[RMDB]
RNA sequence: GGGAACGACUCGAGUAGAGUCGAAAAAGCAGAUUGAUGAUGAAACAAUUUCUCCAAGCGUUUGUUACGCUGACAUCCAUAUAUGAUGGAGGGCUAUGUUACCAUAGCCUUCAUAGUUUUCAAUCUGCUUUAGCAUCCCCUUCGGGGGAUGCUAAAGAAAAGAAACAACAACAACAAC
Reactivity to DMS in 0.01 (KOAc 150mM, MgCl2 10mM, bicine 150mM(pH8.5), 24C), signal-to-noise 5, nucleotides 027 to 126: a040g000c000a000g000a000u000u000g000a010u010g000a040u010g010a110a090a130c160a120a110u040u010u010c020u010c050c070a120a030g020c000g010u000u010u020g010u010u030a070c010g010c000u000g020a160c080a040u000c030c140a100u010a100u040a060u030g010a050u020g010g010a020g000g000g020c000u000a000u000g010u030u080a180c270c000a010u000a010g010c000c000u010u010c010a010u010a110g000u000u010u010u000c000a000a010u000c000u000g000
Reactivity to 2A3 in 0.01 (KOAc 150mM, MgCl2 10mM, bicine 150mM(pH8.5), 24C), signal-to-noise 3, nucleotides 027 to 126: a000g020c030a000g000a010u010u040g000a000u060g000a010u090g080a060a050a010c060a070a140u150u170u060c140u110c080c040a060a000g000c000g020u060u090u140g140u130u150a010c000g000c020u020g020a020c020a050u010c090c000a050u080a010u010a010u300g090a050u100g050g050a000g030g000g000c000u000a000u060g030u150u210a070c110c020a000u000a000g000c000c000u000u010c000a000u020a000g030u000u020u000u040c000a000a000u000c000u000g030